[RMDB]
RNA sequence: GGGAACGACUCGAGUAGAGUCGAAAAUCACGAGAAUCGAUUCUCGACGCGACCGAACGCCUGAUGGCGACCAAGGGCUACGCGGCGACCUCGAUCAGCGACAUCCGCGACGCGUGCGGGCUAGCACCUCCCCUCCUUUGUUCGCAAAGGAGGGGAGAAAAGAAACAACAACAACAAC
Reactivity to 2A3 in 0.01 (KOAc 150mM, MgCl2 10mM, bicine 150mM(pH8.5), 24C), signal-to-noise 6, nucleotides 027 to 126: u100c040a040c050g050a020g070a070a070u090c060g070a130u150u000c030u020c030g030a040c020g030c020g070a110c010c020g030a120a040c020g050c000c020u250g150a210u300g060g010c020g030a080c040c030a060a080g070g000g000c020u070a040c020g000c000g000g000c020g010a040c010c010u000c000g060a070u050c090a000g010c010g020a040c010a060u040c020c000g030c030g040a050c050g050c020g080u080g020c010g000g000g000c010u000a020g030c010a040c010
Reactivity to DMS in 0.01 (KOAc 150mM, MgCl2 10mM, bicine 150mM(pH8.5), 24C), signal-to-noise 2, nucleotides 027 to 126: u040c070a180c030g020a160g000a020a110u030c120g000a070u000u000c020u010c000g010a040c110g000c050g050a300c000c040g000a000a080c290g010c000c000u070g080a300u060g040g030c080g030a080c160c110a130a180g010g010g040c150u020a010c090g080c060g000g000c000g000a170c190c000u000c110g020a000u000c110a080g020c000g090a110c300a070u000c000c050g000c050g000a010c150g000c250g000u040g030c000g000g020g000c000u000a020g000c160a220c200

The record gives the reactivity of an RNA of 177 nucleotides to 2A3 and DMS. Source: RMDB library OK1LIB, as collected in RNAgym. The reactions ran in a buffer of 150 mM KOAc, 10 mM MgCl2 and 150 mM bicine (pH 8.5), at 24 C. Values cover nucleotides 27 to 126. For DMS the reverse transcriptase was MarathonRT.